[RMDB]
RNA sequence: GGGAACGACUCGAGUAGAGUCGAAAAAGUCACCUAUUACGAUAGGUGACAUUUGAACCAGCGAACAAUUCAGUUGCGAGAUUCGAGGUUUCAGUCUGAAUCAUAGUGGCCAUUACGAUGGCUACAACUCACUCCCGACUGUUCGCAGUCGGGAGAAUCUACUCAUUACCUUCGGGUAAUGAGUAGAAAAAGAAACAACAACAACAAC
Reactivity to DMS in 0.01 (KOAc 150mM, MgCl2 10mM, bicine 150mM(pH8.5), 24C), signal-to-noise 1, nucleotides 027 to 156: a090g010u000c000a000c010c000u000a010u000u000a180c300g090a080u000a000g010g030u020g030a000c020a010u000u000u000g010a180a170c020c050a060g000c030g020a050a050c100a240a130u000u000c050a060g000u000u010g020c020g020a050g000a070u000u000c030g020a250g000g010u000u020u010c010a100g020u000c050u010g000a070a050u000c140a080u000a080g030u010g020g050c010c000a020u000u010a100c190g060a090u020g000g000c000u010a000c020a050a040c090u010c090a180c000u000c030c000c000g030a070c000u000g000u010u000c290g070c010a020g020u020c030g000g000g000a000g000a000a010
Reactivity to 2A3 in 0.01 (KOAc 150mM, MgCl2 10mM, bicine 150mM(pH8.5), 24C), signal-to-noise 3, nucleotides 027 to 156: a000g010u000c000a000c000c000u000a000u030u090a080c210g030a000u000a010g020g010u000g000a000c010a010u010u020u060g040a010a030c000c000a010g150c010g000a000a020c010a080a150u020u010c000a010g010u010u010g000c010g000a000g000a000u000u000c000g000a040g010g050u170u150u220c030a040g120u050c010u010g030a010a000u060c070a060u060a100g000u010g000g000c000c000a000u040u040a050c250g140a030u030g000g000c000u000a000c000a010a030c020u080c070a060c000u000c000c000c000g010a000c000u000g040u070u100c240g010c150a000g000u000c000g000g000g000a000g000a000a000
Source information:
The record gives the reactivity of an RNA of 207 nucleotides to DMS and 2A3. High DMS reactivity at an A or C suggests that its Watson-Crick edge is free. For 2A3, 2,351 sequencing reads were counted.